[RMDB]
RNA sequence: GGGAACGACUCGAGUAGAGUCGAAAAGAAAGAAAGAAAGAACUCUGUAAAGUGAGGGAUUGCCUGGACCAGGUCGGCGGGCCUGCUCCAGUUUCCUUCGCUCUGCUCAACGGGCAGACCGCCACAAGGAUAAAACCUAUUUCGAUAGGUUUUAUCCAAAAGAAACAACAACAACAAC
Reactivity to 2A3 in 0.01 (KOAc 150mM, MgCl2 10mM, bicine 150mM(pH8.5), 24C), signal-to-noise 9, nucleotides 027 to 126: g080a010a080a010g110a050a080a010g090a030a100a010g070a060a030c030u050c040u110g070u220a110a120a040g050u040g020a010g020g010g020a040u050u200g080c020c010u000g000g000a000c020c000a000g010g000u020c050g030g070c040g040g000g000c000c000u000g000c010u000c000c000a000g010u010u050u010c000c000u010u010c010g000c010u030c000u020g010c010u010c050a110a080c080g000g020g000c020a030g040a160c000c020g020c020c010a090c060a080a070
Reactivity to DMS in 0.01 (KOAc 150mM, MgCl2 10mM, bicine 150mM(pH8.5), 24C), signal-to-noise 5, nucleotides 027 to 126: g010a120a070a100g000a080a100a050g000a060a090a080g000a170a160c050u010c020u000g010u010a050a080a070g020u010g000a020g000g000g000a070u060u000g010c200c000u000g000g020a020c140c010a010g000g020u000c020g000g010c130g030g010g000c000c000u010g000c300u000c010c010a010g010u000u020u000c000c000u000u000c010g000c050u010c010u010g000c010u010c030a090a130c210g000g010g000c010a030g000a060c040c010g010c010c050a130c200a100a090
Source: RMDB libraries RFM100 and RFMREP, as collected in RNAgym. The record gives the reactivity of an RNA of 177 nucleotides to 2A3 and DMS. 2A3 adducts were read by reverse transcription with SuperScript II with manganese.